[RMDB]
Background: Source: RMDB library OK2TST, as collected in RNAgym. An RNA of 177 nucleotides, treated with 2A3 and DMS and read out base by base. The 2A3 profile rests on 2,594 reads. The reactions ran in a buffer of 150 mM KOAc, 10 mM MgCl2 and 150 mM bicine (pH 8.5), at 24 C.

RNA sequence: GGGAACGACUCGAGUAGAGUCGAAAAAAUGGCCUGGAGAGAGAUCGUACAGCUUAGCACCACUGCUGCCUUGGAACGAUGGGACCCUGCCCUGCCUCUGGAAGGAGCGGUCGCUAGAUGUGAACAGUCCGAAAAUACUAUUCGUAGUAUUUUCGGAAAAAGAAACAACAACAACAAC
Reactivity to 2A3 in 0.01 (KOAc 150mM, MgCl2 10mM, bicine 150mM(pH8.5), 24C), signal-to-noise 2, nucleotides 027 to 126: a010a030u060g030g000c020c010u030g060g010a050g000a020g010a010g020a090u100c020g010u120a040c010a030g010c020u040u070a010g000c040a030c080c000a030c050u060g000c020u020g000c020c000u020u030g080g020a120a080c110g070a140u090g000g010g040a040c050c000c010u060g040c020c000c000u040g020c000c020u060c050u050g050g020a070a050g050g020a020g010c030g010g000u000c000g000c030u040a050g010a130u100g030u030g060a060a040c010a060g110
Reactivity to DMS in 0.01 (KOAc 150mM, MgCl2 10mM, bicine 150mM(pH8.5), 24C), signal-to-noise 7, nucleotides 027 to 126: a070a080u000g010g010c040c030u000g000g010a100g000a110g020a110g010a060u000c060g020u000a080c090a080g010c060u000u000a060g010c040a070c050c050a070c080u000g000c050u000g010c050c020u010u000g010g010a090a080c120g000a080u010g000g000g000a100c060c040c050u010g010c020c020c020u000g000c040c000u000c060u020g010g020a070a060g000g010a060g030c060g010g000u000c080g010c030u000a040g010a070u000g010u010g000a060a090c170a090g000